[RMDB]
This 177-nucleotide RNA was probed chemically with 2A3 and DMS. The 2A3 profile rests on 3,915 reads. The data come from the RNA Mapping Database (RMDB), library TTRDEL. The reactions ran in a buffer of 150 mM KOAc, 10 mM MgCl2 and 150 mM bicine (pH 8.5), at 24 C.
RNA sequence: GGGAACGACUCGAGUAGAGUCGAAAAGAUAUGGACCCAGCGAGGAGGUGGGAUUCUUCGGAAACGAACUAUCCCACUACCCACCCUCCCUGGGUCCUAAGUCAAAAGAUCCUGUUCGCAGGAUCAAGUAACAUAGAAGCUUCGGCUUCUAUGUUACAAAAGAAACAACAACAACAAC
Reactivity to 2A3 in 0.01 (KOAc 150mM, MgCl2 10mM, bicine 150mM(pH8.5), 24C), signal-to-noise 1, nucleotides 027 to 126: g010a010u030a010u060g010g000a010c000c000c000a000g000c000g010a010g020g020a090g000g100u010g000g000g000a010u060u010c000u030u000c020g040g000a040a010a000c020g000a000a020c020u010a020u010c020c010c000a000c000u000a010c000c010c010a040c000c000c000u000c030c020c000u010g030g020g010u010c000c000u000a000a010g000u000c000a020a020a010a090g010a000u010c010c010u020g030u070u100c300g030c130a000g000g020a010u000c020a010a040
Reactivity to DMS in 0.01 (KOAc 150mM, MgCl2 10mM, bicine 150mM(pH8.5), 24C), signal-to-noise 3, nucleotides 027 to 126: g010a020u000a170u000g000g000a020c010c000c000a000g020c300g010a030g000g000a090g020g030u000g000g000g000a020u000u000c060u010u010c000g010g000a030a020a060c000g020a030a010c060u000a010u000c000c000c000a020c010u010a030c030c050c090a300c160c000c000u000c000c120c000u000g000g000g010u000c000c000u000a010a050g000u000c010a080a100a130a100g010a000u000c000c000u000g010u010u010c180g010c010a000g000g000a000u000c010a030a090